Source information: Structure probing data (2A3) for a 207-nucleotide construct. The reactions ran in a buffer of 150 mM KOAc, 10 mM MgCl2 and 150 mM bicine (pH 8.5), at 24 C. It was measured as part of the RMDB library OK3TST. Reactivities are given for positions 27 through 156.
RNA sequence: GGGAACGACUCGAGUAGAGUCGAAAAUCAUUGAGUGUCAGACACUGUGCUGGGAAUGUAAGAAUGAAACAGUCCUGAUUCUAAAAAGCUAAGGAUGUAGCAAGGAGAGUGUGUCAGCAAAUAAUUCAUCAGGAUGUGGAAGACCCUAAUGAAUGAAAUGCGGCCCGUGCUUCGGCACGGGCCGCAUAAAAGAAACAACAACAACAAC
Reactivity to 2A3 in 0.01 (KOAc 150mM, MgCl2 10mM, bicine 150mM(pH8.5), 24C), signal-to-noise 3, nucleotides 027 to 156: u050c040a020u080u160g070a000g030u020g030u050c020a020g030a050c020a020c090u040g030u080g050c010u050g030g030g030a100a060u080g020u080a070a050g050a080a170u150g050a150a130a010c020a030g040u010c000c000u050g010a070u090u000c050u080a070a140a100a040a000g020c030u040a030a020g070g010a030u070g030u080a020g010c050a070a010g030g010a050g040a030g020u070g000u030g040u070c020a000g000c000a000a080a000u140a010a050u150u020c010a010u010c000a050g030g050a030u010g010u010g090g010a000a000g040a030c010c000c020u020a030a020u030g020a020a010u070g060a090a150